[RMDB]
RNA sequence: GGGAACGACUCGAGUAGAGUCGAAAAGCGUCAUUUAAACGCACCUUAAGUGCCGAUUCUUCAUCAACCAAUUCUUGCUUUGUCGUUUGAAUUUGCUGUUCUACUUGCUUGAGCUGUGCUCAAUAAGCCUAGACUUCCCUUUCGAGGGAAGUCUAGGAAAAGAAACAACAACAACAAC
Reactivity to DMS in 0.01 (KOAc 150mM, MgCl2 10mM, bicine 150mM(pH8.5), 24C), signal-to-noise 2, nucleotides 027 to 126: g010c010g010u010c090a050u000u000u000a020a100a050c030g020c060a050c060c170u000u000a030a060g010u000g010c040c030g000a120u010u010c020u010u000c060a050u000c070a090a140c040c090a030a080u000u000c060u000u010g000c040u000u000u010g000u010c030g000u000u010u010g010a040a060u010u000u000g010c030u010g020u000u000c030u010a030c020u020u010g010c020u000u010g020a070g010c020u010g020u000g010c010u000c010a050a100u010a100a130g020
Reactivity to 2A3 in 0.01 (KOAc 150mM, MgCl2 10mM, bicine 150mM(pH8.5), 24C), signal-to-noise 1, nucleotides 027 to 126: g000c000g020u040c050a100u020u060u240a120a130a000c010g030c040a030c010c000u070u090a110a020g020u050g110c040c000g030a070u000u070c020u120u010c060a080u080c020a040a080c000c040a000a050u080u000c020u050u100g030c040u030u100u100g030u050c050g050u000u000u070g040a040a030u080u050u200g010c050u010g050u040u060c010u020a020c010u000u040g090c000u040u010g000a000g010c020u020g000u010g070c000u010c000a040a050u170a110a000g010